[RMDB]
Source information
This 177-nucleotide RNA was probed chemically with 2A3 and DMS. It was measured as part of the RMDB library OK1LIB. Conditions: 150 mM KOAc, 10 mM MgCl2 and 150 mM bicine (pH 8.5), 24 C.
RNA sequence: GGGAACGACUCGAGUAGAGUCGAAAAUCGUUUUCUCUUAUUCGCCCUCAGAGAAGAGCGUACUAGUUGGUAAGACUAUAUAUAUUUGUGGGUGUAUAGUUUUGUCUGGGAGCAGACGGAGGAGUCGGGAUAAUUUAAAAUUCGUUUUAAAUUAUCCAAAAGAAACAACAACAACAAC
Reactivity to 2A3 in 0.01 (KOAc 150mM, MgCl2 10mM, bicine 150mM(pH8.5), 24C), signal-to-noise 4, nucleotides 027 to 126: u060c000g000u000u010u000u030c000u000c000u020u040a060u100u080c010g020c000c000c000u000c010a030g000a010g020a160a020g020a010g020c010g010u030a010c010u040a030g130u020u120g060g030u020a020a020g010a010c010u000a000u000a000u000a010u000a070u050u080u100g070u080g040g070g000u010g000u000a030u000a010g000u010u000u020u040g020u000c010u020g020g020g010a050g040c030a020g010a040c020g000g030a030g060g000a030g040u060c070g020
Reactivity to DMS in 0.01 (KOAc 150mM, MgCl2 10mM, bicine 150mM(pH8.5), 24C), signal-to-noise 4, nucleotides 027 to 126: u030c030g020u000u000u000u010c000u000c010u010u010a100u010u010c040g000c010c010c030u000c090a110g010a100g020a060a040g010a070g000c040g010u010a010c090u020a050g020u010u010g000g000u000a060a040g000a030c010u000a010u010a010u010a030u010a070u010u010u020g010u010g020g000g030u000g000u000a010u000a020g000u000u000u000u000g010u000c010u000g000g000g000a070g010c050a040g000a030c070g010g010a090g010g000a050g000u010c060g010